[RMDB]
The record gives the reactivity of an RNA of 177 nucleotides to DMS and 2A3.
Reactivities are given for positions 27 through 126.
For 2A3 the reverse transcriptase was SuperScript II with manganese.
RNA sequence: GGGAACGACUCGAGUAGAGUCGAAAAGCUAAAGAAAUGGGCAUUACCAUCAUCAUUUGGACUGUUGCUGCCAGUGAUGAAGUGGAAGCAGGUAUAAAGUUCGGAGACGGUGAUGUGUUUACAGCUGACGGCAGAUAACAUUCGUGUUAUCUGCCGUAAAAGAAACAACAACAACAAC
Reactivity to DMS in 0.01 (KOAc 150mM, MgCl2 10mM, bicine 150mM(pH8.5), 24C), signal-to-noise 2, nucleotides 027 to 126: g020c040u000a040a080a070g000a020a100a060u000g040g030g040c000a070u000u000a040c030c010a060u020c030a110u010c030a150u000u000u010g020g000a000c050u000g010u010u000g020c020u000g010c050c020a000g020u000g010a140u010g000a110a120g010u000g010g010a060a040g010c020a040g020g010u000a090u010a050a030a040g000u010u000c050g000g050a090g040a060c100g010g000u000g000a010u000g030u010g010u000u010u000a060c150a030g020c040u000g010
Reactivity to 2A3 in 0.01 (KOAc 150mM, MgCl2 10mM, bicine 150mM(pH8.5), 24C), signal-to-noise 1, nucleotides 027 to 126: g000c030u110a100a120a130g150a090a130a080u190g010g000g000c030a030u030u090a040c010c010a030u020c000a000u000c030a060u020u040u170g010g000a020c030u030g030u210u080g050c000u040g030c020c000a020g010u020g020a130u210g090a100a050g090u070g020g000a050a000g030c020a000g000g080u070a100u070a170a160a000g010u040u040c010g020g030a010g000a000c030g020g050u030g000a030u040g010u000g050u050u020u030a030c020a020g030c020u020g000